An RNA of 207 nucleotides, treated with 2A3 and read out base by base.
RNA sequence: GGGAACGACUCGAGUAGAGUCGAAAAAGCGAAGAUACGUCAUCGCAACGAUUGCCUGAUCGUAAAACAGGAGACGGCCGUGGCCGCGACCACGUAAAAAAGCGUAACGUGGUCUACGGACCACGAAAAAAGCGCGGAACGUUCGCGUUCCGCGCAACGUUACAGAACUCUUCGGAGUUCUGUAACGAAAAGAAACAACAACAACAAC
Reactivity to 2A3 in 0.01 (KOAc 150mM, MgCl2 10mM, bicine 150mM(pH8.5), 24C), signal-to-noise 1, nucleotides 027 to 156: a000g010c020g000a020a000g070a110u070a150c150g020u000c010a050u000c040g000c020a050a080c000g010a000u000u050g020c000c030u060g000a040u020c030g160u230a010a010a010a010c000a010g040g030a050g050a060c210g100g000c080c010g010u000g000g000c050c000g000c010g020a010c030c000a010c040g010u100a040a050a020a020a120a020g100c070g030u050a030a040c020g000u010g000g000u050c000u020a100c110g000g030a090c000c010a010c020g060a000a010a000a000a000a000g000c170g000c000g000g000a000a000c000g030u110u120c220g040c000g070u030u000c020c000g000c000g030c010a010a010
2A3 is a SHAPE reagent: it acylates the 2'-hydroxyl of flexible nucleotides of all four kinds.